RNA sequence: GGGAACGACUCGAGUAGAGUCGAAAACUAACACACUUCGGUGUGUUAGAAGAGCGAACGGUGACGUUCGCUCAACAGUAAGUCUUCGGACUUACUGACGAACGGCUACGGCCGUUCGAAGAGAUGGCGUGAGCCAUCUCAACGCAGAUUCGUGAGAAUCUGCGAACAAUAUUUACGAUAAAACAAUGAGGUUAAACUGAGAGCGCCCCACAUCUUUCCCGGCGAUGUGGGGCGUGCCCGGGACUUAACCUGAGCUACGGCUCAGGAGUGGAAGAUUCGUCUUCCACAAAAGAAACAACAACAACAAC
Reactivity to 2A3 in 0.01 (KOAc 150mM, MgCl2 10mM, bicine 150mM(pH8.5), 24C), signal-to-noise 2, nucleotides 027 to 266: c000u000a000a000c000a000c010a000c000u040u050c210g100g000u000g000u000g000u010u000a000g000a040a010g000a000g000c000g010a000a010c000g030g030u070g020a020c000g000u000u000c000g030c000u000c000a010a000c000a000g010u000a000a000g000u010c000u010u160c300g130g000a000c020u000u000a000c000u000g030a000c000g000a000a010c000g000g020c020u000a070c220g070g000c010c010g000u000u020c000g020a090a030g000a000g000a010u000g000g010c030g070u120g030a020g000c000c000a000u000c000u010c020a000a000c010g000c000a010g010a000u010u020c000g040u090g080a160g000a030a010u000c000u000g000c000g010a060a000c010a040a050u170a090u300u300u270a050c080g050a070u140a170a140a070a020c060a170a140u230g080a160g060g070u120u120a100a130a100c030u060g020a040g000a020g080c040g000c050c000c030c000a010c000a010u030c020u090u070u070c020c020c000g030g020c040g030a000u020g020u010g000g110g020g020c010g000u020g000c010c000c000g040g100g020a020c000u080u060a030a030c010c000u000g000a000g000c000u000a020c200g080g010c000u000c000a000g000g010a020
Notes: An RNA of 307 nucleotides, treated with 2A3 and read out base by base. The 2A3 profile rests on 1,924 reads. The data come from the RNA Mapping Database (RMDB), library POS240.